Structure probing data (2A3 and DMS) for a 177-nucleotide construct. It was measured as part of the RMDB libraries RFM100 and RFMREP. For 2A3 the reverse transcriptase was SuperScript II with manganese.

RNA sequence: GGGAACGACUCGAGUAGAGUCGAAAAUGCUUGCAGUCCCAGCUUCCGGAAUGAGAGGGAGAGCGCAGCAUCUGGCUCCACACGAUCAUCCAGUACAUUUCACCACAUUGUCUGCAGCUCACCUCGCUCUCACUCCGGUAUUCGUACCGGAGUGAGAAAAAGAAACAACAACAACAAC
Reactivity to 2A3 in 0.01 (KOAc 150mM, MgCl2 10mM, bicine 150mM(pH8.5), 24C), signal-to-noise 4, nucleotides 027 to 126: u110g010c050u050u090g010c000a010g050u090c010c010c020a010g030c000u070u010c040c010g080g050a130a100u090g040a060g010a020g110g050g010a290g010a000g050c010g000c000a010g000c000a020u000c030u040g020g020c000u030c040c000a070c000a030c060g040a080u060c020a030u010c000c040a010g060u100a040c030a130u100u080u100c090a090c060c020a050c050a100u030u120g060u100c050u000g000c010a050g000c020u010c010a020c000c000u020c020g020c000
Reactivity to DMS in 0.01 (KOAc 150mM, MgCl2 10mM, bicine 150mM(pH8.5), 24C), signal-to-noise 2, nucleotides 027 to 126: u000g010c040u030u000g030c070a090g000u020c000c000c000a180g010c110u000u010c050c070g000g000a070a070u030g050a100g000a030g000g050g000a050g040a030g020c040g000c050a030g010c100a050u000c080u000g000g000c080u000c030c040a080c020a050c140g000a100u030c040a110u010c050c030a100g000u000a070c110a080u030u000u020c060a200c040c030a100c090a040u000u010g000u020c000u000g000c040a090g030c000u000c070a120c080c020u000c000g000c050